[RMDB]
RNA sequence: GGGAACGACUCGAGUAGAGUCGAAAACAUGCAGGAGCACCCGGAUUUCGACGACCGGUACGUACGCCCCUUGACUAAGGAGCAAGCACAAUCCGAAGAAGCGUUAGCCGAACUUCGAAGGCGGCUAACGGAUCCUGUUGAACCAACCAACAUCGUCCGAAGAUUGAGUAUUCGUACUCAAUCUUCGAAAAGAAACAACAACAACAAC
Reactivity to 2A3 in 0.01 (KOAc 150mM, MgCl2 10mM, bicine 150mM(pH8.5), 24C), signal-to-noise 5, nucleotides 027 to 156: c050a020u170g010c010a010g010g030a040g050c030a070c030c030c030g010g020a080u080u100u130c080g080a110c060g070a110c060c060g100g030u140a070c060g020u030a030c040g010c010c000c000c000u020u040g130a130c060u120a030a020g010g010a040g020c020a030a030g050c020a050c020a090a040u020c020c030g040a080a010g060a070a020g090c010g010u000u000a000g000c000c000g050a140a130c070u190u130c160g090a080a010g050g000c000g000g000c000u000a000a000c000g000g010a020u000c000c000u000g010u040u060g010a020a020c020c010a020a030c020c000a030a070c030a130u210c100g090u060c050
Reactivity to DMS in 0.01 (KOAc 150mM, MgCl2 10mM, bicine 150mM(pH8.5), 24C), signal-to-noise 1, nucleotides 027 to 156: c110a070u000g000c060a090g000g010a070g000c020a260c080c010c000g030g000a150u010u020u000c040g000a110c050g000a080c070c050g020g020u000a090c090g040u000a130c170g000c000c000c000c000u000u010g000a210c140u000a100a030g020g040a070g000c010a120a100g090c020a110c140a080a130u010c000c060g020a080a100g010a060a170g050c070g020u000u000a040g040c020c000g000a030a120c070u020u030c130g010a050a300g040g030c000g000g000c010u000a020a000c000g040g000a050u000c020c020u010g030u000u000g030a100a150c070c040a020a140c040c020a030a100c090a170u000c040g000u000c000